[RMDB]
RNA sequence: GGGAACGACUCGAGUAGAGUCGAAAAGAUAUGGAUAUGGCGAAGUAAGCGUGAUGACCCACAGGGAACUAUGUCGGAAACGACAUAGGGAACUGUGGCAAGCGUAUCUUCGCCAUAUCCUAAGUCAGAAGGAAGUUAGGUUCGCCUAACUUCCUUCAAAAGAAACAACAACAACAAC
Reactivity to DMS in 0.01 (KOAc 150mM, MgCl2 10mM, bicine 150mM(pH8.5), 24C), signal-to-noise 2, nucleotides 027 to 126: g030a080u000a300u010g030g010a000u000a030u000g000g060c000g000a010a010g020u000a110a210g030c000g010u000g000a090u000g000a170c300c000c010a000c000a030g000g000g000a300a300c010u010a000u000g030u000c000g010g000a220a060a170c000g010a000c010a020u000a010g000g000g000a290a240c000u000g000u000g000g000c000a020a000g000c000g030u010a170u000c000u000u000c010g000c000c000a000u000a000u000c000c000u000a020a100g020u000c050a140